[RMDB]
RNA sequence: GGGAACGACUCGAGUAGAGUCGAAAAGAUAUGGAAAUAGUGUAGCUCUAUACCUACCCACCUCGGAAACGAGAGGGUAUGAGCGCAGAUACUAUUUCCUAAGUCAAAAGCCAUGUUCGCAUGGCAACAAACUAAGUUACUUCGGUAACUUAGUUUGAAAAGAAACAACAACAACAAC
Reactivity to 2A3 in 0.01 (KOAc 150mM, MgCl2 10mM, bicine 150mM(pH8.5), 24C), signal-to-noise 5, nucleotides 027 to 126: g060a030u160a110u180g000g010a000a010a000u010a010g010u030g040u090a050g010c000u010c070u140a040u030a070c000c010u110a170c030c030c000a070c020c010u000c000g000g040a090a070a060c010g000a010g010a030g030g000g000u000a020u030g010a000g000c010g000c070a020g060a300u080a040c000u000a000u000u000u000c000c010u010a060a020g120u070c080a050a050a080a060g000c000c010a000u020g030u050u070c260g000c090a000u000g000g020c000a010a020
Reactivity to DMS in 0.01 (KOAc 150mM, MgCl2 10mM, bicine 150mM(pH8.5), 24C), signal-to-noise 8, nucleotides 027 to 126: g000a100u010a300u000g010g000a010a010a010u000a010g010u000g010u000a100g000c000u000c010u010a040u000a020c030c030u010a100c040c020c040a300c170c010u010c000g000g000a120a080a170c010g000a010g000a110g010g000g010u000a000u000g000a010g010c010g030c220a100g000a040u000a030c000u000a000u000u000u000c000c000u000a030a070g000u010c120a090a090a130a110g010c000c000a010u000g000u000u010c190g020c010a010u000g010g010c010a060a090
Structure probing data (2A3 and DMS) for a 177-nucleotide construct. The RNA was probed in 150 mM KOAc, 10 mM MgCl2 and 150 mM bicine (pH 8.5) at 24 C. DMS adducts were read by reverse transcription with MarathonRT. It was measured as part of the RMDB library TTRDEL. For 2A3, 22,970 sequencing reads were counted.